[RMDB]
RNA sequence: GGGAACGACUCGAGUAGAGUCGAAAAGGCGCGCGAGCAGAUACUGAACGCCGCCUCGCGCCAGUUCCGCGAGGGUGACGUGCAGCAUUGGUGGCUGCCGGCCACGGGUGCGGGUGUGCGCACGCUAAGGCUCACGUCAUUUCGAUGACGUGAGCCUAAAAGAAACAACAACAACAAC
Reactivity to 2A3 in 0.01 (KOAc 150mM, MgCl2 10mM, bicine 150mM(pH8.5), 24C), signal-to-noise 1, nucleotides 027 to 126: g000g000c010g000c020g000c020g000a030g000c050a010g030a280u250a160c100u030g000a070a020c020g000c000c040g070c000c000u030c040g000c000g020c030c000a020g020u220u070c010c030g000c020g000a120g040g130g030u040g000a080c050g010u090g000c030a000g060c000a020u110u300g290g040u300g170g000c000u000g000c000c000g000g000c030c000a010c000g100g010g000u170g010c000g000g040g030u030g030u060g060c000g000c070a020c050g080c020u070a050
Reactivity to DMS in 0.01 (KOAc 150mM, MgCl2 10mM, bicine 150mM(pH8.5), 24C), signal-to-noise 1, nucleotides 027 to 126: g000g030c010g000c200g020c010g020a130g000c010a020g000a220u000a120c100u000g010a030a030c010g020c000c030g000c000c000u000c040g030c010g000c020c010a160g020u000u010c070c020g000c000g000a300g000g000g000u000g000a060c000g000u010g030c030a060g000c010a120u000u010g030g010u000g010g000c010u000g000c000c080g000g010c040c020a040c020g000g000g060u000g010c010g010g000g010u020g030u000g000c010g000c000a090c150g000c160u010a060